[RMDB]
RNA sequence: GGGAACGACUCGAGUAGAGUCGAAAACAACCUGGGAGUUACGUCCGGAUAUUGCCCCAGGAGCAAUAGAACGGUAGACAUCAACUGAUGCGAGAGCAUCUCAACUUAUGGACCUUAGUGUAUCGCAAGACGACCGGUCCCGUCGGAAUUGCGUAGAGCCAUGGAUAAAUUUCGAUUUAUCCAUGGCAAAAGAAACAACAACAACAAC
Reactivity to DMS in 0.01 (KOAc 150mM, MgCl2 10mM, bicine 150mM(pH8.5), 24C), signal-to-noise 3, nucleotides 027 to 156: c040a070a230c020c010u020g000g020g000a100g020u000u010a060c040g040u010c020c060g020g010a230u000a040u000u000g000c040c000c060c120a230g030g000a080g020c020a040a060u000a040g010a100a130c020g070g000u000a140g010a120c040a150u010c040a070a150c080u000g010a030u000g040c010g000a190g010a300g020c010a010u000c000u000c020a060a090c120u000u000a110u000g000g010a050c030c060u010u000a140g020u000g010u000a070u000c070g020c100a050a130g020a160c020g010a040c030c030g010g010u010c010c010c070g010u000c010g000g010a210a140u000u000g010c000g010u000a130g010a260
Reactivity to 2A3 in 0.01 (KOAc 150mM, MgCl2 10mM, bicine 150mM(pH8.5), 24C), signal-to-noise 4, nucleotides 027 to 156: c030a000a080c010c000u020g000g000g010a190g050u110u130a040c040g030u020c050c020g000g010a050u000a100u070u160g050c000c020c000c000a060g090g010a050g030c020a030a090u090a140g080a160a040c020g030g010u050a030g050a120c020a070u070c060a020a080c050u070g000a000u000g020c000g020a020g000a010g050c010a020u000c030u010c020a030a210c030u150u100a040u140g050g000a020c010c000u060u150a050g030u050g040u130a080u170c010g000c010a010a000g020a020c010g010a020c020c020g030g050u020c020c000c000g000u000c000g000g040a130a070u030u020g000c000g000u010a040g020a020
An RNA of 207 nucleotides, treated with DMS and 2A3 and read out base by base. For DMS, 4,134 sequencing reads were counted. For DMS the reverse transcriptase was MarathonRT. 2A3 adducts were read by reverse transcription with SuperScript II with manganese. Conditions: 150 mM KOAc, 10 mM MgCl2 and 150 mM bicine (pH 8.5), 24 C. It was measured as part of the RMDB library OK3TST. The 2A3 profile rests on 2,157 reads.